RNA sequence: GGGAACGACUCGAGUAGAGUCGAAAAGAGCAAUCCCAAAUAGGCAGGCGAUGAAGCGGCCCGCUGAGUCUGCGGGUAGGGAGCUGGAGCCGGCUGGUAACAGCCGGCCUAGAGGAAUGGUUGUCACCCAGUAGGGAGAUUUCGAUCUCCCUACUGGAAAAGAAACAACAACAACAAC
Reactivity to DMS in 0.01 (KOAc 150mM, MgCl2 10mM, bicine 150mM(pH8.5), 24C), signal-to-noise 3, nucleotides 027 to 126: g020a130g030c130a180a110u010c000c000c010a090a100a130u030a070g010g010c010a020g000g000c000g000a080u050g000a120a080g000c020g000g000c160c090c030g040c020u000g010a120g000u000c040u000g020c000g000g020g010u030a070g000g000g000a070g010c020u000g010g010a100g020c010c010g030g020c000u010g000g000u050a130a170c010a010g010c030c010g010g000c020c000u010a020g000a110g000g010a120a090u030g010g020u030u000g010u010c080a150c130
Reactivity to 2A3 in 0.01 (KOAc 150mM, MgCl2 10mM, bicine 150mM(pH8.5), 24C), signal-to-noise 3, nucleotides 027 to 126: g110a000g030c040a050a160u060c000c000c020a040a010a080u130a030g030g020c050a000g000g020c020g110a170u130g050a050a050g030c020g010g060c040c050c030g040c010u060g050a090g090u010c050u040g000c020g000g050g030u070a070g000g010g000a050g040c010u020g020g030a020g000c000c000g000g000c000u000g000g000u030a100a020c000a010g000c000c000g000g000c000c000u040a010g000a010g020g090a100a060u140g150g000u040u010g010u010c030a060c010

An RNA of 177 nucleotides, treated with DMS and 2A3 and read out base by base. For 2A3, 2,029 sequencing reads were counted. Reactivities are rounded to 0.1 and cut off at 0 and 3. For DMS the reverse transcriptase was MarathonRT.